[RMDB]
RNA sequence: GGGAACGACUCGAGUAGAGUCGAAAAGAUAUGGAAGAAAAGUCUCGCGAUGGAGGUCGGAAACGACUACCCACCCAUCGAACUACGAGUCGCUCUUCCUAAGUCAUGGGUGAGCUUCGGCUCACAACCUAAUCACCCACUUCGGUGGGUGAUUAGGAAAAGAAACAACAACAACAAC
Reactivity to 2A3 in 0.01 (KOAc 150mM, MgCl2 10mM, bicine 150mM(pH8.5), 24C), signal-to-noise 1, nucleotides 027 to 126: g000a000u190a040u250g030g000a040a010g010a030a220a020a060g020u000c010u000c020g000c020g010a010u000g000g010a010g050g000u020c050g000g040a050a100a040c040g000a000c000u050a110c040c050c010a030c000c000c020a010u030c000g030a180a110c110u230a060c140g010a000g010u000c010g000c070u000c000u000u000c020c000u030a180a030g060u020c070a120u170g270g030g080u010g000a000g000c000u060u140c280g130g000c020u040c010a010c000a010a020
Reactivity to DMS in 0.01 (KOAc 150mM, MgCl2 10mM, bicine 150mM(pH8.5), 24C), signal-to-noise 2, nucleotides 027 to 126: g000a060u000a300u010g030g000a020a010g000a060a130a130a110g040u000c000u000c000g160c010g050a040u000g040g000a040g010g000u000c010g000g000a140a040a230c000g020a010c000u000a030c040c010c130a300c040c000c000a000u000c000g000a060a140c180u040a270c000g000a020g000u020c050g010c300u000c000u000u000c020c000u000a040a070g010u000c040a030u020g030g000g000u010g000a000g000c010u010u000c120g010g030c000u000c010a010c000a100a130